[RMDB]
RNA sequence: GGGAACGACUCGAGUAGAGUCGAAAAGAAAAAGUAAUAUCAAAGCCAAUAUAAUUAUUCUAGUGUCUUUGCUUUGUUCAUAUCUUGAGGCACGAAGUGCGGACACAAGCACUCAACAAUCAUUGCCCGGUGGUGAUGGUUUCGACCAUCACCACCGAAAAGAAACAACAACAACAAC
Reactivity to 2A3 in 0.01 (KOAc 150mM, MgCl2 10mM, bicine 150mM(pH8.5), 24C), signal-to-noise 1, nucleotides 027 to 126: g090a010a050a060a000a000g160u040a090a180u110a010u120c070a070a000a000g000c010c010a010a000u050a000u030a000a130u300u180a090u150u000c300u150a000g000u000g080u040c000u000u000u000g020c000u000u050u020g090u100u000c030a030u090a270u110c080u030u050g080a110g090g100c110a000c190g000a000a000g030u000g050c000g000g110a030c040a000c000a090a000g050c000a000c000u130c000a000a250c000a060a070u160c150a110u070u150g000c000c000